RNA sequence: GGGAACGACUCGAGUAGAGUCGAAAAGACAGCCCAAACUAAACCUGCCGAUGAUAAGUCGGUGGGGAUGUGGUGUUACGACCUCUAGCCUGAGGUUCGACCUCGGCUUUCCUAACCUAUCUAGCCGAACUCCCCUGGAACGGGGGGCCAUAGAGGGCACUACUAUUCCCUUCGGGGAAUAGUAGUGAAAAGAAACAACAACAACAAC
Reactivity to DMS in 0.01 (KOAc 150mM, MgCl2 10mM, bicine 150mM(pH8.5), 24C), signal-to-noise 1, nucleotides 027 to 156: g010a110c030a180g050c030c000c010a060a090a240c090u000a030a050a120c000c000u000g000c030c000g040a040u000g030a180u000a160a280g040u000c010g060g030u000g000g020g010g000a060u010g020u000g000g020u000g000u010u000a140c070g000a040c000c060u010c030u000a110g030c060c050u010g000a080g020g010u000u000c130g000a080c030c010u010c030g000g040c010u000u000u000c100c030u000a100a160c050c030u000a070u020c040u000a100g000c040c010g000a100a060c000u000c000c000c000c000u020g000g030a090a110c160g000g010g000g040g040g060c020c050a090u010a070g010a110g010g020g000
Reactivity to 2A3 in 0.01 (KOAc 150mM, MgCl2 10mM, bicine 150mM(pH8.5), 24C), signal-to-noise 3, nucleotides 027 to 156: g070a000c020a020g080c030c010c060a090a110a080c070u080a060a040a060c000c000u010g000c010c010g010a050u060g050a090u090a300a020g010u000c010g010g010u020g010g000g020g000a010u140g060u060g010g030u030g030u120u100a040c070g030a020c030c010u030c060u070a050g110c010c080u120g010a000g020g000u040u130c140g050a140c000c010u020c010g010g000c000u010u010u010c040c030u060a050a050c010c000u060a190u170c020u030a020g080c050c030g070a180a160c020u070c000c010c000c000u030g050g040a040a020c050g010g000g010g000g010g000c000c020a020u040a020g040a040g000g000g000